[RMDB]
RNA sequence: GGGAACGACUCGAGUAGAGUCGAAAAACGGAUGUGUACUAUCUGACAUAAACAUAUCAAAAGAAGGAAUUAAACGAUGGAGAAGAUUUGACGGACCAUGUGGUUAUGAUUUAUACACGGCGGAUAACGUAAUUCCAAAAGAUGGUUUACGAGGAGCACGAUAUUUUCAGUUCGCUGAAAAUAUCGUAAAAGAAACAACAACAACAAC
Reactivity to DMS in 0.01 (KOAc 150mM, MgCl2 10mM, bicine 150mM(pH8.5), 24C), signal-to-noise 3, nucleotides 027 to 156: a090c060g010g010a040u000g050u000g000u000a080c080u000a070u010c060u000g020a160c080a090u000a080a070a070c050a030u000a080u000c050a080a060a040a090g000a110a080g010g020a060a060u000u000a070a090a090c060g010a060u000g020g010a090g020a080a070g020a110u010u020u010g030a100c020g020g000a080c030c020a140u000g040u000g010g020u000u000a060u000g000a090u000u000u010a080u000a100c080a050c020g020g000c010g030g010a110u000a060a110c040g010u000a020a030u010u000c020c020a030a030a070a120g020a110u000g010g030u000u000u000a040c050g020a130g010g010a100g000c110
Reactivity to 2A3 in 0.01 (KOAc 150mM, MgCl2 10mM, bicine 150mM(pH8.5), 24C), signal-to-noise 5, nucleotides 027 to 156: a000c040g030g010a040u030g040u020g020u090a060c030u080a080u060c060u050g090a030c010a050u170a030a110a020c030a040u110a030u120c080a040a070a010a020g060a030a040g050g020a010a040u090u120a150a050a030c080g020a030u070g020g010a040g010a040a030g020a060u080u090u240g020a030c010g010g000a000c000c020a030u060g030u050g040g010u030u030a040u070g040a030u010u100u120a070u030a040c080a010c040g030g000c040g030g000a020u050a070a010c000g000u000a010a030u120u060c000c000a020a050a020a060g100a060u050g010g000u020u020u030a030c020g010a030g060g020a030g030c020
This 207-nucleotide RNA was probed chemically with DMS and 2A3. For DMS, 5,519 sequencing reads were counted. The data come from the RNA Mapping Database (RMDB), library OK3TST. As a SHAPE reagent, 2A3 marks flexible, mostly unpaired nucleotides at the ribose 2'-OH. DMS adducts were read by reverse transcription with MarathonRT.